[RMDB]
Structure probing data (2A3 and DMS) for a 177-nucleotide construct. Reactivities are rounded to 0.1 and cut off at 0 and 3. For DMS the reverse transcriptase was MarathonRT. For 2A3 the reverse transcriptase was SuperScript II with manganese. For DMS, 1,527 sequencing reads were counted.

RNA sequence: GGGAACGACUCGAGUAGAGUCGAAAAUCUUGAAGUCCAUUGAAUCAGGUCAACUGGAGACGUGGAUUUAUCGCACAGUGGAAGAGCACAAACCAUUGGUUUGGGUCUCGCAUCCGUUAAUUGGUCCGCUAUUAGCCCCUUUCGAGGGGCUAAUAGCAAAAGAAACAACAACAACAAC
Reactivity to 2A3 in 0.01 (KOAc 150mM, MgCl2 10mM, bicine 150mM(pH8.5), 24C), signal-to-noise 3, nucleotides 027 to 126: u070c060u050u150g090a010a000g010u000c000c000a010u000u190g070a020a040u020c030a000g020g250u110c050a140a070c120u020g060g060a070g000a010c010g040u020g000g000a000u020u080u130a220u100c040g030c040a050c000a050g020u090g090g030a060a040g010a010g020c000a010c010a030a000a000c000c010a230u050u300g010g020u010u000u000g050g010g050u080c000u000c030g040c000a080u020c010c030g020u060u140a080a040u060u040g110g000u050c040c010
Reactivity to DMS in 0.01 (KOAc 150mM, MgCl2 10mM, bicine 150mM(pH8.5), 24C), signal-to-noise 2, nucleotides 027 to 126: u020c020u050u000g030a080a050g010u010c000c020a020u010u010g010a130a170u000c040a080g000g000u070c180a120a250c050u000g000g020a000g020a200c300g070u000g010g000a000u000u000u040a110u010c130g000c280a190c090a020g010u000g010g000a060a140g000a000g020c040a190c050a040a010a060c000c000a150u020u010g040g000u000u000u000g000g000g070u000c000u010c000g110c130a040u020c000c020g000u000u040a040a130u040u000g010g000u020c010c000